[RMDB]
RNA sequence: GGGAACGACUCGAGUAGAGUCGAAAACGCGGCCGUAGCGCAUGCCGCGGCGCGCGCGCAUGCAUAUCGCGUAUAUAAUAUAUCGCGAUAUAUUAUAGCAUUAUAAUAUGCCGAUAUUAGCUAUAGCUCAAGCAUUGCUUUUCGAAGCAAUGCUUGAAAAAGAAACAACAACAACAAC
Reactivity to 2A3 in 0.01 (KOAc 150mM, MgCl2 10mM, bicine 150mM(pH8.5), 24C), signal-to-noise 2, nucleotides 027 to 126: c000g000c040g040g000c000c030g000u040a020g000c030g040c100a100u300g020c000c020g020c000g060g000c110g030c030g000c000g000c050g030c160a090u120g040c020a000u000a020u040c000g010c030g120u030a000u000a000u000a040a300u100a020u020a000u100c020g000c010g000a000u000a000u010a010u050u040a010u050a010g000c000a020u060u140a110u140a190a100u070a030u090g110c000c040g090a040u020a060u060u090a020g050c000u060a050u040a080g000c020
Reactivity to DMS in 0.01 (KOAc 150mM, MgCl2 10mM, bicine 150mM(pH8.5), 24C), signal-to-noise 2, nucleotides 027 to 126: c000g020c040g010g020c010c020g090u010a010g000c010g030c230a080u000g010c030c020g030c000g030g000c090g020c030g010c020g000c130g000c120a040u020g010c130a050u000a000u000c000g000c010g000u000a020u000a050u000a070a070u020a300u010a010u010c000g000c000g010a030u000a010u000a040u010u010a030u000a060g010c030a140u000u010a120u020a030a060u000a050u010g000c040c000g030a060u000a010u000u010a050g000c030u000a030u000a010g010c120